[RMDB]
This 177-nucleotide RNA was probed chemically with 2A3 and DMS. For 2A3, 1,190 sequencing reads were counted. Source: RMDB library OK2TRN, as collected in RNAgym. Values cover nucleotides 27 to 126. The DMS profile rests on 1,610 reads.

RNA sequence: GGGAACGACUCGAGUAGAGUCGAAAAUGUAGGUGGGCUUGGCUUCACAUUAAACAGGUAAUGAGAUACCAGGUGCUUCAGAGUCGCCUACACGCUCAUGCCAAUUCUGUUAGCACAUGGUCUGAGGACGUUUUACCGUGUUCGCACGGUAAAACGUAAAAGAAACAACAACAACAAC
Reactivity to 2A3 in 0.01 (KOAc 150mM, MgCl2 10mM, bicine 150mM(pH8.5), 24C), signal-to-noise 2, nucleotides 027 to 126: u060g020u030a040g060g020u050g080g000g040c030u020u030g020g000c000u130u130c060a050c010a080u130u130a080a160a000c100a020g180g000u090a080a020u060g050a060g000a070u020a010c000c020a000g050g060u040g030c000u070u070c020a010g000a010g120u060c010g020c000c010u060a020c010a000c050g050c000u000c010a040u090g040c020c010a070a060u130u010c030u040g170u160u100a060g030c050a020c020a070u040g040g010u010c060u030g040a030g040g080
Reactivity to DMS in 0.01 (KOAc 150mM, MgCl2 10mM, bicine 150mM(pH8.5), 24C), signal-to-noise 2, nucleotides 027 to 126: u020g000u000a020g010g020u000g010g030g010c070u000u000g010g010c010u010u000c050a050c080a060u010u000a040a120a140c200a050g000g000u000a030a040u020g000a110g000a080u000a100c040c010a050g000g010u010g020c090u000u000c090a050g000a040g030u000c040g000c020c010u010a060c030a040c130g010c030u000c080a120u010g000c030c040a080a060u000u020c020u000g010u000u000a070g010c040a040c060a060u010g030g000u000c110u000g020a080g000g020